[RMDB]
RNA sequence: GGGAACGACUCGAGUAGAGUCGAAAAAGUUGACUGUCGAUGUUGCUAACCCUAGCACUCCAGCCUACACUUUUACAACAGUGAAACCUGGCGCAGCAUUUAGUGUGUUAGCAUGCUAUAAUGGUCGUGAGCGACCCCUUCGGGGGUCGCAAAAGAAACAACAACAACAAC
Reactivity to 2A3 in 0.01 (KOAc 150mM, MgCl2 10mM, bicine 150mM(pH8.5), 24C), signal-to-noise 2, nucleotides 027 to 129: a000g130u080u100g090a100c000u010g100u070c040g020a070u090g020u050u000g000c000u000a050a040c000c000c000u000a010g000c000a000c020u030c000c000a020g010c030c020u290a080c040a000c000u000u070u140u160a150c010a080a000c030a020g000u030g030a010a010a020c060c000u000g040g000c000g000c070a230g000c000a020u000u000u080a000g000u020g100u050g000u120u000a000g000c010a000u060g000c030u210a050u000a170a260u080g030g000u010c020g000u150g000a110
Reactivity to DMS in 0.01 (KOAc 150mM, MgCl2 10mM, bicine 150mM(pH8.5), 24C), signal-to-noise 3, nucleotides 027 to 129: a170g040u000u070g000a080c000u010g010u040c140g000a060u070g020u010u010g010c000u000a000a050c000c160c130u000a040g020c060a300c050u040c000c000a050g000c050c140u080a300c060a000c080u020u020u080u000a000c300a110a110c300a000g010u040g020a000a130a210c300c050u020g000g000c140g000c090a170g000c060a140u000u000u000a000g050u070g000u060g000u020u000a000g060c000a000u080g020c190u000a040u040a110a030u010g000g000u000c000g070u000g010a230